Conditions: 150 mM KOAc, 10 mM MgCl2 and 150 mM bicine (pH 8.5), 24 C. This 177-nucleotide RNA was probed chemically with 2A3.
RNA sequence: GGGAACGACUCGAGUAGAGUCGAAAAUUAUGGGUGCGUGUACCAGAUAAUGUACCCCCAAAUGCCCUGGUACGGCCGAGAGUGGGGAGAGCCCGCUGUCCCUCUCGAAAUGCUCUCACAUGGUCACUACGACUGACGUGUUCGCACGUCAGUCGUAAAAAGAAACAACAACAACAAC
Reactivity to 2A3 in 0.01 (KOAc 150mM, MgCl2 10mM, bicine 150mM(pH8.5), 24C), signal-to-noise 2, nucleotides 027 to 126: u170u090a090u070g000g070g020u030g060c140g100u070g020u060a050c000c000a030g230a290u220a200a050u160g040u150a140c000c000c060c000c020a030a050a120u090g020c010c000c040u040g020g020u060a000c010g090g030c020c020g080a070g000a000g030u180g010g000g000g000a010g000a040g050c000c030c020g020c120u010g140u120c000c000c000u110c000u000c020g010a000a080a000u150g000c020u000c010u030c040a060c010a050u130g020g000u110c010a020c170
Overview: For 2A3 the reverse transcriptase was SuperScript II with manganese. Reactivities are given for positions 27 through 126.